[RMDB]
RNA sequence: GGGAACGACUCGAGUAGAGUCGAAAAGCGGUGACUGAACUUCUGAGGUCUGGGCUGGACAAUGUUCACAAAAUGCAAAUGCCUUUGUGGGUCCCUUGUGCAUAACAGGGAGAGGAUUUGCCAAAUGCAAUGUACCAGUGUUCGCACUGGUACAUUGAAAAGAAACAACAACAACAAC
Reactivity to DMS in 0.01 (KOAc 150mM, MgCl2 10mM, bicine 150mM(pH8.5), 24C), signal-to-noise 5, nucleotides 027 to 126: g030c070g010g010u000g010a100c080u010g010a150a090c080u000u010c060u010g000a100g020g010u010c050u010g000g000g020c040u000g010g000a070c100a070a060u010g010u000u000c050a070c080a060a060a070a100u010g010c020a030a040a040u010g000c020c040u000u000u000g020u000g010g000g000u010c010c010c010u000u010g020u010g000c250a070u010a070a020c030a020g000g010g010a090g010a030g000g010a070u000u000u000g000c010c290a050a090a070u010g010
Reactivity to 2A3 in 0.01 (KOAc 150mM, MgCl2 10mM, bicine 150mM(pH8.5), 24C), signal-to-noise 2, nucleotides 027 to 126: g010c020g070g010u040g020a070c050u050g020a060a070c020u090u040c030u090g040a010g000g040u040c050u070g010g010g050c020u020g000g000a000c030a020a200u120g040u130u110c020a040c030a120a130a050a040u150g000c020a010a050a070u210g180c010c010u010u060u050g050u090g050g040g020u030c000c010c000u030u080g020u010g020c080a030u100a270a030c000a010g020g020g010a030g010a010g000g000a010u020u010u050g020c020c020a060a090a050u180g060

Chemical mapping of a 177-nucleotide RNA with DMS and 2A3. The RNA was probed in 150 mM KOAc, 10 mM MgCl2 and 150 mM bicine (pH 8.5) at 24 C. It was measured as part of the RMDB library OK2TRN.